[RMDB]
Chemical mapping of a 177-nucleotide RNA with 2A3 and DMS.
RNA sequence: GGGAACGACUCGAGUAGAGUCGAAAACGCUCUUCAGAUCUCUGAAAAGAGUCGGUGCAUUCAUUAAAGCUACGUAAUGCGACGAUCUUGUUUGCAGCUGAUACCGCAUCGCUCGGGGAGAACGUCGUCGCACCAUAUACUUCGGUAUAUGGUGCGAAAAAGAAACAACAACAACAAC
Reactivity to 2A3 in 0.01 (KOAc 150mM, MgCl2 10mM, bicine 150mM(pH8.5), 24C), signal-to-noise 4, nucleotides 027 to 126: c010g020c010u010c000u050u030c010a030g000a170u060c080u000c000u110g060a060a070a040a040g010a020g060u070c030g050g000u040g050c010a040u010u170c020a020u030u240a140a080a060g040c030u090a080c100g150u160a100a020u050g020c010g010a020c030g010a060u060c060u100u190g100u100u090u150g030c020a030g000c000u100g000a030u080a120c060c080g020c040a030u010c020g000c010u020c010g030g000g000g000a030g000a030a010c030g020u030c000g010
Reactivity to DMS in 0.01 (KOAc 150mM, MgCl2 10mM, bicine 150mM(pH8.5), 24C), signal-to-noise 3, nucleotides 027 to 126: c130g010c010u000c020u000u000c020a040g000a170u010c140u000c050u030g010a060a060a090a040g000a050g010u000c040g000g020u010g030c020a070u000u000c090a120u020u010a050a060a080g010c070u020a060c130g000u000a100a110u000g010c020g020a050c040g010a090u030c050u020u000g000u040u000u000g030c100a020g030c000u020g010a080u010a200c170c170g000c060a080u010c040g000c060u000c010g000g000g000g010a060g010a040a080c060g010u000c080g030

The reactions ran in a buffer of 150 mM KOAc, 10 mM MgCl2 and 150 mM bicine (pH 8.5), at 24 C. For 2A3 the reverse transcriptase was SuperScript II with manganese. DMS adducts were read by reverse transcription with MarathonRT.